[RMDB]
RNA sequence: GGGAACGACUCGAGUAGAGUCGAAAAGGGACAGAAGAAAAUACAAAAGAUAUACGUGCCCCAGAGGUUUUUCCACUCAUGGUACUGUGUGAUUGGUAUCCCAUUAUACAGAGCAGAAAAGUGAGGCAUGGAAAGGAUGAGUGAUUCAUCUGAUGUCAAAUAAAGUCGGAUUCGUCCGACUUUAUUUAAAAGAAACAACAACAACAAC
Reactivity to 2A3 in 0.01 (KOAc 150mM, MgCl2 10mM, bicine 150mM(pH8.5), 24C), signal-to-noise 2, nucleotides 027 to 156: g070g030g060a030c080a050g180a050a040g020a020a190a090a050u180a050c090a080a280a020a030g080a010u060a010u020a130c010g000u010g030c000c000c000c020a050g030a040g070g020u090u030u000u050u000c050c010a060c010u040c000a000u020g060g020u050a040c020u080g010u010g010u010g080a010u020u090g020g020u080a050u080c030c010c000a030u030u040a000u000a000c010a000g030a030g080c030a040g120a110a050a060a000g080u110g000a010g010g000c030a010u090g080g080a080a130a010g060g000a010u010g000a010g050u060g030a120u030u070c010a000u010c040u030g020a010u060g070u140c080
Reactivity to DMS in 0.01 (KOAc 150mM, MgCl2 10mM, bicine 150mM(pH8.5), 24C), signal-to-noise 2, nucleotides 027 to 156: g030g030g040a130c040a080g000a080a110g000a060a080a080a140u000a260c050a090a080a170a100g000a130u000a090u000a090c050g040u000g000c020c010c020c030a150g010a110g030g000u000u000u000u000u000c020c030a170c020u000c020a070u000g030g000u010a040c020u000g020u000g020u000g010a100u010u010g010g030u000a130u000c040c060c020a020u000u000a100u000a050c070a160g000a100g010c010a050g000a040a030a080a100g020u010g010a030g020g000c020a020u000g010g010a090a020a240g000g010a050u010g000a070g020u000g000a150u010u000c030a020u050c010u000g000a090u000g010u000c060
The record gives the reactivity of an RNA of 207 nucleotides to 2A3 and DMS. As a SHAPE reagent, 2A3 marks flexible, mostly unpaired nucleotides at the ribose 2'-OH. Reactivities are given for positions 27 through 156. Source: RMDB library OK3TST, as collected in RNAgym.